The data come from the RNA Mapping Database (RMDB), library OK3TST. Structure probing data (DMS and 2A3) for a 207-nucleotide construct. DMS adducts were read by reverse transcription with MarathonRT. For 2A3, 1,260 sequencing reads were counted.

[RMDB]
RNA sequence: GGGAACGACUCGAGUAGAGUCGAAAAGAGGCCCUUUUAACAACUUUGCUGAACCAAUCACAAGACUAGAAGUCUCACAAUCAAUUCUAAGACUGCAGCCAAGAAGGAAGUUCCUUCAAGACAUUAGGGCUGGGCCUGUGAAGAGAGCAAGAAGAAAAAUUUAGCACUAUUUCGAUAGUGCUAAAUUAAAAGAAACAACAACAACAAC
Reactivity to DMS in 0.01 (KOAc 150mM, MgCl2 10mM, bicine 150mM(pH8.5), 24C), signal-to-noise 2, nucleotides 027 to 156: g030a150g000g010c010c010c030u000u030u000u030a110a130c070a070a070c070u000u000u000g030c000u000g000a080a100c060c010a110a220u020c010a040c020a080a150g000a100c020u010a200g010a110a110g010u000c010u010c100a100c150a100a190u020c080a090a160u000u000c030u000a110a020g010a020c020u010g010c050a060g020c020c010a100a210g030a070a080g000g010a110a230g000u030u000c010c000u000u000c010a060a160g010a100c030a050u030u000a160g000g010g040c010u000g000g000g010c040c000u000g030u000g010a040a170g000a100g000a110g030c110a040a030g010a100a190g000a020a080a080
Reactivity to 2A3 in 0.01 (KOAc 150mM, MgCl2 10mM, bicine 150mM(pH8.5), 24C), signal-to-noise 2, nucleotides 027 to 156: g110a050g040g040c010c000c000u020u050u010u070a060a030c050a030a040c020u070u040u070g020c020u040g050a110a060c040c010a040a060u070c020a070c010a130a140g070a110c020u060a050g110a150a000g080u000c030u040c060a090c030a090a160u170c040a030a110u230u050c030u120a070a020g010a040c050u080g010c040a010g000c030c020a070a030g000a040a000g020g020a120a070g130u160u040c000c000u000u000c020a000a030g040a040c020a110u130u150a030g010g110g000c000u020g010g010g010c020c010u010g000u000g020a070a030g050a010g000a000g020c030a040a020g070a040a070g060a030a150a060